[RMDB]
The data come from the RNA Mapping Database (RMDB), library OK1LIB.
The record gives the reactivity of an RNA of 177 nucleotides to 2A3.
For 2A3 the reverse transcriptase was SuperScript II with manganese.
The RNA was probed in 150 mM KOAc, 10 mM MgCl2 and 150 mM bicine (pH 8.5) at 24 C.
RNA sequence: GGGAACGACUCGAGUAGAGUCGAAAAUGUGGUCGAGGCGCACGCCCCACCGGUGCCUCCGGCCGACGGGAUACCGGACGCCCAAGACCUGGCGCCGUUCUGCCCGGUGGCGCUACAGCUCCUGGUCCCCGAUUUAGCACUUCGGUGCUAAAUCGGGAAAAGAAACAACAACAACAAC
Reactivity to 2A3 in 0.01 (KOAc 150mM, MgCl2 10mM, bicine 150mM(pH8.5), 24C), signal-to-noise 2, nucleotides 027 to 126: u180g010u010g020g010u000c020g030a020g000g050c010g000c030a080c020g000c030c000c000c000a050c060c030g040g040u040g010c010c000u060c040c030g000g020c090c000g060a060c020g010g060g000a040u080a220c010c000g030g040a060c090g030c010c010c010a070a030g040a030c010c010u000g000g000c020g000c020c010g000u100u050c040u040g040c000c010c000g030g000u030g000g010c000g010c030u080a050c020a050g030c000u070c010c020u050g070g050u070c000